An RNA of 177 nucleotides, treated with 2A3 and DMS and read out base by base.
RNA sequence: GGGAACGACUCGAGUAGAGUCGAAAAGUGCUGAUUGAAAUUCAUGGGAGCCUCUCCAUAAUGGAUGAACGCCGCGUUAGUUCGCGCAGUCGCGACGUAAACGCUCUGUAUUCCCGUUCAGGCCUCAGCCUGGAGUGACUUUCGAGUCACUCCAGGCAAAAGAAACAACAACAACAAC
Reactivity to 2A3 in 0.01 (KOAc 150mM, MgCl2 10mM, bicine 150mM(pH8.5), 24C), signal-to-noise 1, nucleotides 027 to 126: g040u090g030c030u040g030a120u120u100g050a170a100a080u120u060c060a030u060g000g000g080a030g010c040c020u110c000u030c040c030a010u160a250a090u120g030g010a010u020g030a120a040c000g050c100c030g000c020g000u030u030a060g060u050u100c010g050c000g010c120a030g130u130c030g030c000g000a010c000g060u060a000a000a050c030g000c000u040c010u000g020u050a080u010u050c000c010c040g110u040u060c040a020g000g080c000c010u010c030a010
Reactivity to DMS in 0.01 (KOAc 150mM, MgCl2 10mM, bicine 150mM(pH8.5), 24C), signal-to-noise 2, nucleotides 027 to 126: g010u010g020c020u010g010a110u020u010g000a050a100a100u010u000c070a030u000g010g000g010a040g010c160c120u000c020u000c010c020a080u010a060a070u010g010g000a060u010g010a060a030c110g000c070c080g020c000g030u010u000a220g000u010u000c050g000c120g010c220a150g030u000c040g000c010g020a040c060g010u000a070a080a090c040g040c000u010c050u010g010u020a210u000u000c020c020c020g040u010u000c070a050g000g000c180c100u000c120a180